[RMDB]
RNA sequence: GGGAACGACUCGAGUAGAGUCGAAAAGCUACACACGUGCUACAAUGGACGGUACAAAGAGCUGCAAGACCGCGAGGUGGAGCUAAUCUCAUAAAACCGUUCUCAGUUCGGAUUGUAGGCUGCAACUGUCAUCGUAAACUUUCGAGUUUACGAUGACAAAAGAAACAACAACAACAAC
Reactivity to 2A3 in 0.01 (KOAc 150mM, MgCl2 10mM, bicine 150mM(pH8.5), 24C), signal-to-noise 5, nucleotides 027 to 126: g010c010u010a000c030a000c000a010c010g030u050g010c000u080a040c130a090a110u150g010g010a010c000g000g010u080a030c060a060a110a020g020a010g030c080u040g000c010a000a040g040a040c010c000g050c050g030a060g000g020u000g020g030a000g010c000u010a060a120u050c000u010c020a030u160a080a040a010a010c000c000g000u010u000c010u000c000a030g020u040u050c000g030g070a180u050u060g020u030a050g160g010c030u030g010c030a070a040c050u070
Reactivity to DMS in 0.01 (KOAc 150mM, MgCl2 10mM, bicine 150mM(pH8.5), 24C), signal-to-noise 3, nucleotides 027 to 126: g000c000u010a010c060a130c300a300c060g060u000g000c040u000a150c220a110a190u020g010g000a000c040g000g000u000a060c080a150a080a080g000a020g060c240u000g000c030a000a300g000a010c000c010g000c220g020a210g010g000u000g000g000a300g000c000u000a070a090u000c030u000c000a030u000a140a060a050a000c020c000g030u030u000c000u000c060a050g030u000u000c010g000g000a300u030u010g000u040a010g000g000c000u000g000c100a000a070c140u000